[RMDB]
RNA sequence: GGGAACGACUCGAGUAGAGUCGAAAACUUAGAACUGAGCCUGCCACGUACUGUGCACUUAUUAAAUACUAGUUGGUGUCACAAUUCACCUCUAGGUGAUCCUGAACUCUUCAGCUGGGUAAGAGUUUGUGCUGGGUGUGGUGGUGCCUGUGGCCUCGAGGCCUGUACACUUCGGUGUACAGGCCUCAAAAGAAACAACAACAACAAC
Reactivity to 2A3 in 0.01 (KOAc 150mM, MgCl2 10mM, bicine 150mM(pH8.5), 24C), signal-to-noise 1, nucleotides 027 to 156: c010u020u100a010g120a130a040c010u010g060a030g010c000c040u030g000c020c000a020c020g060u100a130c040u060g160u150g180c010a000c030u100u000a030u120u210a180a140a160u210a100c000u000a030g060u060u030g050g000u030g030u130c050a040c090a210a080u230u050c000a000c000c000u030c010u000a030g000g030u050g060a050u040c000c140u100g040a070a000c010u000c020u010u040c060a050g070c120u160g120g080g000u000a000a000g000a010g000u070u040u040g000u010g000c000u110g000g000g000u190g000u020g010g000u010g000g010u060g030c000c040u050g010u020g110g080c000c000u010c030
The record gives the reactivity of an RNA of 207 nucleotides to 2A3. Reactivities are given for positions 27 through 156. 2A3 adducts were read by reverse transcription with SuperScript II with manganese. The RNA was probed in 150 mM KOAc, 10 mM MgCl2 and 150 mM bicine (pH 8.5) at 24 C. The 2A3 profile rests on 387 reads.